Chemical mapping of a 177-nucleotide RNA with DMS and 2A3. For 2A3 the reverse transcriptase was SuperScript II with manganese. Conditions: 150 mM KOAc, 10 mM MgCl2 and 150 mM bicine (pH 8.5), 24 C.
RNA sequence: GGGAACGACUCGAGUAGAGUCGAAAAAUGAUGGCAUUUCACCAACAAUACAGUAACACAUUGGUCCGAUGGUCAAAUCGUAAACAAAUGUGUAAACCAAAAGCAUACUACCAACGGCCAUACUAAGAGUAGUACUCGAGUUCGCUCGAGUACUACUAAAAGAAACAACAACAACAAC
Reactivity to DMS in 0.01 (KOAc 150mM, MgCl2 10mM, bicine 150mM(pH8.5), 24C), signal-to-noise 2, nucleotides 027 to 126: a040u020g030a100u060g000g000c000a220u050u000u000c040a170c040c030a040a040c160a120a030u020a090c300a070g030u000a160a000c070a020c000a000u020u040g000g020u000c080c000g000a000u000g000g040u040c300a090a060a000u040c000g010u000a130a090a030c000a050a020a000u000g010u000g000u000a060a010a080c130c020a060a020a030a210g000c070a150u000a040c010u030a040c040c130a090a050c150g000g000c000c030a050u040a090c090u050a010a030g020
Reactivity to 2A3 in 0.01 (KOAc 150mM, MgCl2 10mM, bicine 150mM(pH8.5), 24C), signal-to-noise 5, nucleotides 027 to 126: a000u080g060a020u030g020g000c060a090u050u050u070c100a120c090c020a060a080c020a060a120u140a060c090a060g040u090a050a040c000a000c030a070u040u060g020g040u110c120c010g010a030u020g010g190u160c040a080a150a070u030c000g060u050a070a070a030c040a020a050a010u000g010u000g020u080a160a000a010c050c030a000a170a020a000g080c020a050u050a180c040u050a050c050c010a070a020c030g060g020c010c050a020u080a060c070u080a080a010g060